Overview
An RNA of 207 nucleotides, treated with 2A3 and DMS and read out base by base. The RNA was probed in 150 mM KOAc, 10 mM MgCl2 and 150 mM bicine (pH 8.5) at 24 C. It was measured as part of the RMDB library M2RFPK. 2A3 adducts were read by reverse transcription with SuperScript II with manganese.
[RMDB]
RNA sequence: GGGAACGACUCGAGUAGAGUCGAAAAACGGACUACGGUCCGAAGGGUUCGGGGUACUAGUGUGAAUGCCUGGCUAGUACCCUGUGCUAGUGGUUUAUCUACUGAUGUUCAAUUAAGGGCAUUUGAAAAAAGACUCCUAACUUCGGUUAGGAGUCAACGGUACCAUAAAGUUCGCUUUAUGGUACCGAAAAGAAACAACAACAACAAC
Reactivity to 2A3 in 0.01 (KOAc 150mM, MgCl2 10mM, bicine 150mM(pH8.5), 24C), signal-to-noise 3, nucleotides 027 to 156: a010c020g000g010a000c010u030a030c130g150g020u000c000c040g020a060a000g080g000g020u080u160c020g000g000g010g000u000a000c000u020a000g010u000g030u050g220a040a000u040g020c010c000u000g040g010c000u000a000g000u000a000c000c000c010u000g040u040g020c020u020a020g030u020g070g080u130u220u200a100u110c030u030a020c030u030g080a100u110g060u190u170c060a080a070u140u250a300a300g030g000g020c000a010u090u040u060g020a080a060a000a010a000a000g000a000c000u010c010c020u000a000a010c030u040u060c110g090g000u000u000a000g000g010a000g000u000c000a000a000
Reactivity to DMS in 0.01 (KOAc 150mM, MgCl2 10mM, bicine 150mM(pH8.5), 24C), signal-to-noise 1, nucleotides 027 to 156: a110c070g000g010a050c010u000a170c260g110g000u020c010c000g010a090a090g000g000g000u000u000c060g030g010g020g000u000a000c010u000a050g040u000g050u010g010a060a040u000g020c020c050u000g010g020c000u010a010g010u000a000c000c000c000u000g000u000g020c050u010a100g040u000g010g000u000u000u000a140u020c010u000a130c080u000g000a080u000g000u000u000c040a120a210u000u010a130a140g000g000g030c010a000u000u000u000g000a000a050a120a140a100a280g000a030c000u010c000c000u000a010a020c010u000u000c300g050g020u000u000a000g020g030a010g020u030c000a010a000